[RMDB]
RNA sequence: GGGAACGACUCGAGUAGAGUCGAAAACAACUGUUAUCAUGCCACUGCAUUGUUAACACUCCAACAAAUAGAGUUGAAGUUUAAUCCACCUGCUCUACAAAGGGCUGGUGAAGCUGCUAACUUUUGUAUACACCCAAGUUCGCUUGGGUGAAAAGAAACAACAACAACAAC
Reactivity to 2A3 in 0.01 (KOAc 150mM, MgCl2 10mM, bicine 150mM(pH8.5), 24C), signal-to-noise 9, nucleotides 027 to 129: c020a000a040c030u030g010u020u020a020u030c020a000u110g010c020c100a160c160u180g010c020a030u050u170g040u050u050a010a000c020a010c040u020c040c020a040a030c040a040a220a110u300a050g090a010g040u010u030g040a030a000g010u020u050u180a070a060u080c040c010a020c010c000u030g020c000u000c000u070a120c100a080a210a090g010g000g000c010u030g000g000u000g000a010a010g010c020u040g020c010u010a010a030c000u000u000u020u040g080u020a050u010a070
Reactivity to DMS in 0.01 (KOAc 150mM, MgCl2 10mM, bicine 150mM(pH8.5), 24C), signal-to-noise 8, nucleotides 027 to 129: c120a060a080c170u010g000u000u000a000u000c030a000u000g010c000c210a110c140u050g000c090a050u010u020g040u000u000a010a020c070a060c090u030c030c020a040a070c140a080a120a080u080a020g020a090g000u020u020g020a070a070g010u010u010u030a050a070u090c140c000a000c030c010u000g020c000u020c020u050a030c300a000a090a070g000g000g000c020u000g000g000u020g000a040a050g020c050u040g000c110u040a000a000c040u050u020u010u020g020u030a130u000a200